[RMDB]
RNA sequence: GGGAACGACUCGAGUAGAGUCGAAAAUGAGGUGGGUGGAUCACCUGAGGUCAGGAGAUUGAGACCAGCCUGGUCAACGUGGUGAAACCUCGUCUAUACUAAAAAUACAAAAAUUAGCUGGGCGUGGUUAAUCCCAGCUACUCAGGAGGCUGAGGCAUAUCCUUAGACCAUUCGUGGUCUAAGGAUAAAAAGAAACAACAACAACAAC
Reactivity to DMS in 0.01 (KOAc 150mM, MgCl2 10mM, bicine 150mM(pH8.5), 24C), signal-to-noise 2, nucleotides 027 to 156: u010g000a040g010g020u000g020g000g030u010g020g050a110u000c060a070c010c040u000g000a050g010g010u000c020a040g010g030a080g010a190u010u010g010a110g000a050c030c010a100g010c000c010u000g000g030u000c030a030a040c040g040u000g000g010u000g010a100a090a080c000c000u000c000g020u000c030u000a150u010a110c020u020a010a040a060a040a050u000a220c020a030a040a060a040a130u010u010a020g020c010u010g010g000g030c060g040u010g010g000u000u020a070a160u000c000c010c000a040g000c010u000a000c060u000c060a050g010g010a160g030g020c020u000g000a070g010g040c040a200
Reactivity to 2A3 in 0.01 (KOAc 150mM, MgCl2 10mM, bicine 150mM(pH8.5), 24C), signal-to-noise 3, nucleotides 027 to 156: u160g010a020g030g030u030g000g000g070u100g020g070a040u020c020a020c010c030u040g040a050g020g030u010c010a000g010g050a090g020a090u070u170g050a100g010a070c010c040a000g030c040c030u010g000g010u010c060a080a030c060g090u150g020g000u010g020a060a030a010c000c010u000c010g010u000c020u020a120u020a090c030u090a020a050a040a010a050u130a040c040a010a090a050a010a120u100u020a000g000c000u000g020g010g000c010g060u070g040g010u100u060a010a020u040c000c000c000a000g000c000u010a010c000u010c010a030g000g060a040g050g000c010u010g010a010g020g000c030a040
Source: RMDB library OK3TST, as collected in RNAgym. Chemical mapping of a 207-nucleotide RNA with DMS and 2A3. Reactivities are given for positions 27 through 156.